[RMDB]
RNA sequence: GGGAACGACUCGAGUAGAGUCGAAAAGAUUCGUGCGGUCGAGAAGUUCGAGUACCGCCGCCGCUACAAGUUCUCGACCUACGCGACGUGGUGGAUUCGUCAGGCGAUCAACCGCGCCAUCGCCGACGACCUACGACUCCUUCGGGAGUCGUAGGUCAAAAGAAACAACAACAACAAC
Reactivity to 2A3 in 0.01 (KOAc 150mM, MgCl2 10mM, bicine 150mM(pH8.5), 24C), signal-to-noise 3, nucleotides 027 to 126: g020a070u100u050c000g010u070g010c000g010g030u040c030g000a020g000a060a000g030u150u210c080g000a030g040u080a070c000c060g050c020c020g000c000c030g020c040u090a030c030a090a150g050u070u000c020u000c010g010a030c000c000u040a030c020g010c010g050a010c040g000u040g030g040u030g070g070a140u100u030c000g010u050c040a060g030g010c000g000a020u040c030a000a030c030c040g050c030g000c010c000a020u000c000g000c000c000g000a060c050
Reactivity to DMS in 0.01 (KOAc 150mM, MgCl2 10mM, bicine 150mM(pH8.5), 24C), signal-to-noise 2, nucleotides 027 to 126: g010a110u030u000c100g010u030g000c300g010g020u030c010g010a030g010a000a190g010u000u010c130g000a210g000u000a080c040c060g010c000c040g010c010c000g010c090u010a180c080a010a190g000u000u010c030u000c020g000a020c000c000u000a080c080g030c000g030a000c180g090u030g020g010u000g000g000a080u000u000c000g000u000c090a170g070g000c040g000a010u000c170a060a070c000c010g000c040g030c030c280a060u000c060g000c120c000g000a000c050
Conditions: 150 mM KOAc, 10 mM MgCl2 and 150 mM bicine (pH 8.5), 24 C. An RNA of 177 nucleotides, treated with 2A3 and DMS and read out base by base. It was measured as part of the RMDB library OK1LIB. For 2A3, 1,723 sequencing reads were counted.